[RMDB]
RNA sequence: GGGAACGACUCGAGUAGAGUCGAAAAAGGAGGGGGCUGAGGGCUAACCUACGGAAAUUCCUGAGCUCCCCUGACGUCCAGGCCGUCCCCUCUCCGAGUGAAGGGAGACUCCGGGAUGUCGUGCAUGAUAGCAAGCUCUUCGGAGCUUGCAAAAGAAACAACAACAACAAC
Reactivity to DMS in 0.01 (KOAc 150mM, MgCl2 10mM, bicine 150mM(pH8.5), 24C), signal-to-noise 3, nucleotides 027 to 129: a130g020g010a150g000g000g000g000g000c060u040g030a050g000g000g060c090u020a060a290c060c010u000a180c110g000g000a000a030a030u000u000c030c010u020g020a030g020c050u040c000c000c000c000u030g000a050c070g040u010c010c030a050g000g060c110c130g020u050c010c060c030c020u040c120u020c010c060g000a180g050u050g050a020a030g010g010g000a140g010a010c030u050c000c000g020g060g000a010u020g030u000c000g060u070g030c060a100u130g040a140u070a100
Reactivity to 2A3 in 0.01 (KOAc 150mM, MgCl2 10mM, bicine 150mM(pH8.5), 24C), signal-to-noise 3, nucleotides 027 to 129: a000g130g020a090g000g000g000g000g000c000u040g090a010g000g000g000c010u030a050a140c000c060u060a020c050g080g030a020a040a060u090u010c010c010u020g040a010g000c000u100c000c000c000c000u010g000a010c000g020u000c000c000a010g000g000c010c070g010u020c000c000c000c000u030c010u000c010c000g020a040g020u300g040a000a020g030g000g010a170g000a000c010u140c010c000g000g010g010a000u000g000u000c010g020u040g050c050a030u150g050a080u200a050